[RMDB]
RNA sequence: GGGAACGACUCGAGUAGAGUCGAAAAUUGCCGAUCAGGCUGAGUUGUGGCGGGGGCGAAACAGGAUCGACAAGGGUGUAAAGAUCGCUCUUUUACUCGGCAUGAUACCACCGUUAUCGGGUCAACAAAAAGAAUAUGUGGUUCGCCACAUAUUCAAUCUAAAUGCAUCCUUCGGGAUGCAUUUAGAAAAAGAAACAACAACAACAAC
Reactivity to DMS in 0.01 (KOAc 150mM, MgCl2 10mM, bicine 150mM(pH8.5), 24C), signal-to-noise 1, nucleotides 027 to 156: u020u010g030c010c000g000a090u010c080a110g050g000c030u010g000a210g040u010u010g030u000g040g020c070g000g000g040g020g040c050g010a100a100a060c040a080g010g020a110u000c000g020a100c040a150a110g010g000g010u000g010u000a030a080a160g020a050u010c070g050c030u000c030u010u000u010u000a110c030u010c010g000g020c000a090u020g000a130u000a130c040c020a000c000c030g000u000u000a100u000c080g000g000g000u010c050a080a220c140a040a060a090a090a200g020a020a020u000a010u010g050u000g010g000u000u010c300g040c000c000a010c000a000u000a020u010u010c010a030a120
Reactivity to 2A3 in 0.01 (KOAc 150mM, MgCl2 10mM, bicine 150mM(pH8.5), 24C), signal-to-noise 2, nucleotides 027 to 156: u110u050g020c000c000g030a070u090c090a030g050g000c020u020g040a050g040u060u070g060u120g060g000c060g030g000g020g000g000c050g000a030a010a000c080a000g030g020a030u080c020g040a020c040a020a080g080g030g000u080g060u090a110a150a000g070a050u090c030g010c000u010c040u020u140u080u050a070c050u000c000g020g000c000a010u050g010a000u000a010c000c030a010c010c000g090u100u040a020u060c100g000g000g000u020c020a000a040c070a070a080a000a000a010g000a000a000u000a000u000g000u010g020g010u050u090c140g010c120c000a000c000a000u010a000u000u010c000a000a000